About this RNA:
Structure probing data (2A3 and DMS) for a 177-nucleotide construct. The RNA was probed in 150 mM KOAc, 10 mM MgCl2 and 150 mM bicine (pH 8.5) at 24 C.
RNA sequence: GGGAACGACUCGAGUAGAGUCGAAAACCCUUAACCCUGGUUGAUGAACCAUGACCGUGCGGCUAGAGCGUGAUUGACGGCUACGAUCGUCCUCGGACGCAUCCAGUGCUGUAGAGGAUCGUUACUCUUUGAUUUAAACAUUCGUGUUUAAAUCAAAAAAAGAAACAACAACAACAAC
Reactivity to 2A3 in 0.01 (KOAc 150mM, MgCl2 10mM, bicine 150mM(pH8.5), 24C), signal-to-noise 9, nucleotides 027 to 126: c000c000c000u020u130a080a070c020c010c020u030g030g020u030u050g060a180u090g060a050a030c020c020a050u060g040a030c030c030g020u040g020c020g020g000c020u050a030g010a020g060c040g020u060g040a110u030u100g040a030c010g020g000c020u060a040c060g050a070u040c020g020u020c000c010u030c050g090g130a020c020g000c010a020u030c040c040a060g050u030g060c010u050g010u040a020g010a020g040g020a020u040c020g020u030u050a120c020u010c000
Reactivity to DMS in 0.01 (KOAc 150mM, MgCl2 10mM, bicine 150mM(pH8.5), 24C), signal-to-noise 9, nucleotides 027 to 126: c000c000c010u020u020a100a140c070c030c020u000g000g010u000u000g010a100u010g010a100a100c080c050a060u010g000a090c080c050g010u010g010c060g010g020c040u000a070g000a090g010c060g010u000g010a100u010u010g000a070c050g010g010c030u010a100c130g010a050u000c030g010u000c010c020u010c140g000g000a060c070g010c100a040u010c060c100a110g010u010g010c010u000g010u010a100g000a080g000g000a060u000c050g010u010u000a100c050u000c070